[RMDB]
RNA sequence: GGGAACGACUCGAGUAGAGUCGAAAAGGUAUUAUUCGACAGCUUGUAAUAGUAUCCGUAUAUGCCUACCCUACGCAACUGGGCGUACUCCUUGCAAUGGACUUUUUACAGUUCCUACUUAUCCGGUCAAAAUAGAGCAGUUCGCUGCUCUAUUUUGAAAAGAAACAACAACAACAAC
Reactivity to DMS in 0.01 (KOAc 150mM, MgCl2 10mM, bicine 150mM(pH8.5), 24C), signal-to-noise 1, nucleotides 027 to 126: g010g050u010a030u010u010a050u000u000c040g010a090c110a150g010c040u000u000g000u030a060a080u010a030g030u000a060u000c090c050g010u000a040u000a040u000g010c010c000u000a200c060c000c000u010a050c060g000c040a040a090c090u000g000g000g000c030g000u000a050c110u000c020c030u000u000g040c130a140a080u000g020g010a030c070u000u050u000u000u030a040c150a080g000u000u000c000c020u000a040c150u030u000a090u010c020c030g000g000u000
Reactivity to 2A3 in 0.01 (KOAc 150mM, MgCl2 10mM, bicine 150mM(pH8.5), 24C), signal-to-noise 3, nucleotides 027 to 126: g000g000u020a010u120u020a010u050u220c020g050a020c050a060g020c040u070u140g160u300a070a100u100a240g050u020a050u030c080c010g000u030a010u010a000u050g010c010c010u040a070c010c010c010u020a010c060g000c010a110a020c080u090g030g050g000c010g010u010a030c040u050c040c040u040u090g010c060a040a110u100g010g040a030c020u060u140u070u050u110a110c070a050g000u070u070c010c000u050a110c030u090u100a050u080c020c010g000g000u010